Overview
The data come from the RNA Mapping Database (RMDB), library OK2TRN. Structure probing data (2A3 and DMS) for a 177-nucleotide construct. For 2A3, 1,192 sequencing reads were counted. The RNA was probed in 150 mM KOAc, 10 mM MgCl2 and 150 mM bicine (pH 8.5) at 24 C.
[RMDB]
RNA sequence: GGGAACGACUCGAGUAGAGUCGAAAACCAAGGAAGGUUGGAAUUCCUUCCUUGGCCUUGGCCGGAAGGAAGGCCGGCCAAUUGGUUAAUUAAUUCCAACCUUAAUUGGCCAAGGCCAACCUUGGCCUGACCGCGAAUAAUUCGUUAUUCGCGGUCAAAAAGAAACAACAACAACAAC
Reactivity to 2A3 in 0.01 (KOAc 150mM, MgCl2 10mM, bicine 150mM(pH8.5), 24C), signal-to-noise 1, nucleotides 027 to 126: c000c000a000a010g050g010a010a010g000g000u060u100g010g140a020a020u190u300c010c000u020u040c000c000u000u010g000g040c010c030u020u040g020g000c010c010g040g080a060a070g100g090a030a040g300g020c010c020g020g000c000c010a000a000u060u110g000g020u050u130a060a050u140u090a030a030u100u000c060c000a000a020c020c000u150u150a120a040u130u130g010g000c010c010a070a050g020g050c050c020a040a110c170c000u010u020g000g000c000c000
Reactivity to DMS in 0.01 (KOAc 150mM, MgCl2 10mM, bicine 150mM(pH8.5), 24C), signal-to-noise 1, nucleotides 027 to 126: c020c010a050a040g010g000a040a010g010g010u000u010g020g000a040a050u000u000c050c040u000u010c020c040u000u000g000g000c010c020u000u000g020g010c000c000g000g020a080a010g040g040a140a230g000g000c020c000g000g020c000c000a000a040u000u010g010g020u020u000a070a100u010u020a030a030u010u010c050c030a100a070c210c080u000u000a040a100u010u000g000g000c000c010a040a020g000g020c110c200a100a140c050c010u000u000g000g010c000c000